[RMDB]
RNA sequence: GGGAACGACUCGAGUAGAGUCGAAAAAAGAGAUUCACGCGCGUCAAUAAAUUGUAUUACAUACUAACUAAAAAGCUUUUCUUAAUCGUACUAACGAAGUUAGAGGUUCUUAUGUGAUUGGACAACUCUCUCCCAAAGACUUCGGUCUUUGGGAGAGAAAAGAAACAACAACAACAAC
Reactivity to 2A3 in 0.01 (KOAc 150mM, MgCl2 10mM, bicine 150mM(pH8.5), 24C), signal-to-noise 1, nucleotides 027 to 126: a000a000g150a000g000a020u020u080c030a010c060g130c050g000c040g030u060c000a000a040u170a040a030a000u140u060g030u050a060u030u160a010c000a000u070a030c040u020a000a030c010u080a080a060a000a020a020g080c000u000u050u150u090c030u080u140a150a150u080c030g040u030a000c010u010a180a040c020g050a040a000g000u050u000a010g000a050g100g040u030u000c000u010u070a070u010g020u020g000a010u030u000g090g010a000c000a000a090c040u000

Structure probing data (2A3) for a 177-nucleotide construct. For 2A3 the reverse transcriptase was SuperScript II with manganese. It was measured as part of the RMDB library RFM100. The reactions ran in a buffer of 150 mM KOAc, 10 mM MgCl2 and 150 mM bicine (pH 8.5), at 24 C. Reactivities are given for positions 27 through 126.